This 207-nucleotide RNA was probed chemically with 2A3. It was measured as part of the RMDB library M2RFPK. 2A3 adducts were read by reverse transcription with SuperScript II with manganese.
RNA sequence: GGGAACGACUCGAGUAGAGUCGAAAACGACCUUAAACAGUUCUGGUGGUGCUCUGAAUGGAGUGCUCUACUGAGAUUAUAAAAUAGAAGGUAAGCUAUUAUCUCUUACAACAGGGCAGGGCUUGAUAAAAGCCUUUCAGUUUCGACUGAAAGGCAAGAAACGACCUAGUUUCGACUAGGUCGUUUCAAAAGAAACAACAACAACAAC
Reactivity to 2A3 in 0.01 (KOAc 150mM, MgCl2 10mM, bicine 150mM(pH8.5), 24C), signal-to-noise 1, nucleotides 027 to 156: c050g050a030c020c010u080u230a140a150a030c040a030g010u040u020c000u030g020g000u060g000g000u030g020c010u000c000u030g260a130a160u300g000g000a010g010u000g030c000u000c030u090a070c030u060g000a000g040a090u030u180a060u160a180a150a170a050u120a030g080a120a000g150g050u060a040a000g020c000u010a040u130u040a050u190c030u000c000u010u080a080c030a150a000c010a100g000g010g010c000a000g000g000g050c010u000u060g060a040u030a100a120a020a060g000c020c000u000u000u000c010a010g000u010u000u210c250g050a000c000u000g010a000a000a000g000g000c000a010a010